[RMDB]
RNA sequence: GGGAACGACUCGAGUAGAGUCGAAAACGUUGAGUUCGCUCAACGAAAAAUCCUAAGUCUGCAUCGUGCUUUCUGACAUGGCUUAUCGGAAACGAUAAGCCAACAGCAGAAAGAACUACACGAGCAGAUAUGGAAAAAACAGGUCUUCGGACCUGAACAGGCUUAAAUGAUUCGUCAUUUAAGCCUGAAAAGAAACAACAACAACAAC
Reactivity to DMS in 0.01 (KOAc 150mM, MgCl2 10mM, bicine 150mM(pH8.5), 24C), signal-to-noise 2, nucleotides 027 to 156: c020g030u010u020g010a020g000u010u000c300g030c000u000c000a000a050c010g010a000a080a130a110a180u000c000c000u000a070a300g010u000c010u030g040c010a140u000c000g020u000g000c000u040u000u000c000u020g000a090c070a300u000g000g000c000u000u000a010u000c000g020g010a250a060a180c000g040a030u000a000a000g010c010c000a020a000c100a210g000c020a010g020a010a060a070g000a090a150c030u000a210c000a000c000g000a180g000c000a000g010a030u010a120u000g010g000a000a110a040a090a080a170c000a000g020g010u000c010u000u010c300g050g000a040c000c000u000g000a050a190
Reactivity to 2A3 in 0.01 (KOAc 150mM, MgCl2 10mM, bicine 150mM(pH8.5), 24C), signal-to-noise 3, nucleotides 027 to 156: c010g000u000u000g010a010g000u060u080c180g060c060u000c010a000a000c000g090a140a020a000a000a000u030c010c000u020a120a030g030u000c020u020g040c050a300u020c010g000u010g020c000u020u000u000c010u010g110a200c020a100u060g010g000c030u000u000a000u000c000g020g050a120a060a000c020g000a000u000a000a000g010c000c010a020a010c030a010g020c000a000g010a000a000a000g000a010a020c050u140a040c060a000c000g010a000g000c000a000g000a000u020a020u020g030g000a000a090a030a050a000a050c010a000g010g000u000c010u030u100c210g140g000a000c000c000u000g000a020a020
Structure probing data (DMS and 2A3) for a 207-nucleotide construct. For 2A3 the reverse transcriptase was SuperScript II with manganese. For DMS the reverse transcriptase was MarathonRT. Conditions: 150 mM KOAc, 10 mM MgCl2 and 150 mM bicine (pH 8.5), 24 C. Values are in units of 0.01, from 0 to 300, in steps of 10. Source: RMDB library RNAMAK, as collected in RNAgym.